[RMDB]
RNA sequence: GGGAACGACUCGAGUAGAGUCGAAAAGAUAUGGAUCGCAAACGAUCUUGGAUUUAAGCAUGGAGAUAGUCAUUCGGAAACGAAUGAUGAUUCUCCAUGCUUUGUCAGAUCUAUGCGAUCCUAAGUCCAUUGCGGCAAAGUUCGCUUUGCCGCAAUGAAAAGAAACAACAACAACAAC
Reactivity to DMS in 0.01 (KOAc 150mM, MgCl2 10mM, bicine 150mM(pH8.5), 24C), signal-to-noise 1, nucleotides 027 to 126: g000a140u000a300u000g000g010a000u000c000g000c000a030a050a290c300g000a000u000c030u000u030g030g000a000u000u000u000a000a000g030c000a000u000g000g000a000g000a020u000a270g000u000c000a000u000u020c000g010g000a170a140a210c010g000a010a000u000g000a000u000g010a250u010u000c000u000c000c000a000u000g000c000u010u000u000g000u010c000a020g020a000u000c000u000a300u000g000c000g000a020u000c000c000u000a020a050g000u000c010